[RMDB]
RNA sequence: GGGAACGACUCGAGUAGAGUCGAAAAGAUAUCAAAACGAAGAUAAGUGGCUGCACAAACUUUUUUUAGCGAAUAUAUCGUUAUGUUAUCGGGUCUAGCACUCUAUCCACUGAUUUCAUGACCACGACAUUUAGGUUUAUUUCGAUAAACCUAAAUGAAAAGAAACAACAACAACAAC
Reactivity to 2A3 in 0.01 (KOAc 150mM, MgCl2 10mM, bicine 150mM(pH8.5), 24C), signal-to-noise 9, nucleotides 027 to 126: g020a020u080a010u070c050a010a040a050a070c090g090a060a070g030a100u070a090a070g050u040g100g030c030u060g020c060a020c050a090a120a100c090u160u100u070u040u030u080u140a020g010c010g040a100a010u140a020u030a060u200c010g010u020u020a050u090g070u060u030a050u110c020g040g000g010u010c040u040a010g020c020a020c030u060c020u030a040u030c020c010a050c070u040g020a070u020u040u070c050a040u090g040a030c000c010a050c050g070a010
Reactivity to DMS in 0.01 (KOAc 150mM, MgCl2 10mM, bicine 150mM(pH8.5), 24C), signal-to-noise 9, nucleotides 027 to 126: g010a060u010a040u010c040a040a060a080a100c090g010a080a100g010a060u010a050a080g010u000g010g020c030u010g010c100a090c110a060a080a110c050u000u000u020u010u020u020u000a040g010c040g000a070a120u010a080u020a060u000c020g010u000u000a040u010g000u020u000a030u010c050g010g000g010u000c020u010a080g020c060a040c050u000c060u000a050u010c040c030a070c080u010g000a060u000u000u000c040a060u000g010a140c040c030a090c110g010a140

Source: RMDB libraries RFM100 and RFMREP, as collected in RNAgym.
This 177-nucleotide RNA was probed chemically with 2A3 and DMS.
The reactions ran in a buffer of 150 mM KOAc, 10 mM MgCl2 and 150 mM bicine (pH 8.5), at 24 C.
Values cover nucleotides 27 to 126.